[RMDB]
RNA sequence: GGGAACGACUCGAGUAGAGUCGAAAACAGUCCCCGCGGGAGGGGAUGAUCAGCAUAAGUGACUGGCUAGAGCGCGGGGGGGUAAGGGGACCAUCCUUGCAGGGAUGCUGGGUUCCCCGCAGACAGGAACCCCCUGAGUAUUCGUACUCAGGGGGUUAAAAGAAACAACAACAACAAC
Reactivity to DMS in 0.01 (KOAc 150mM, MgCl2 10mM, bicine 150mM(pH8.5), 24C), signal-to-noise 2, nucleotides 027 to 126: c150a150g080u000c050c000c000c030g000c110g010g010g010a140g020g040g020g000a000u000g000a090u000c040a070g030c090a100u000a090a100g000u000g000a130c020u010g020g000c090u050a180g000a210g010c090g040c020g000g020g050g000g000g010g010u000a040a070g010g000g010g030a080c150c050a050u010c040c020u000u020g000c090a060g000g000g010a050u000g000c120u030g020g000g010u000u000c010c000c000c080g010c130a090g010a120c140a070g010g000
The record gives the reactivity of an RNA of 177 nucleotides to DMS. Conditions: 150 mM KOAc, 10 mM MgCl2 and 150 mM bicine (pH 8.5), 24 C. Source: RMDB library OK2TRN, as collected in RNAgym.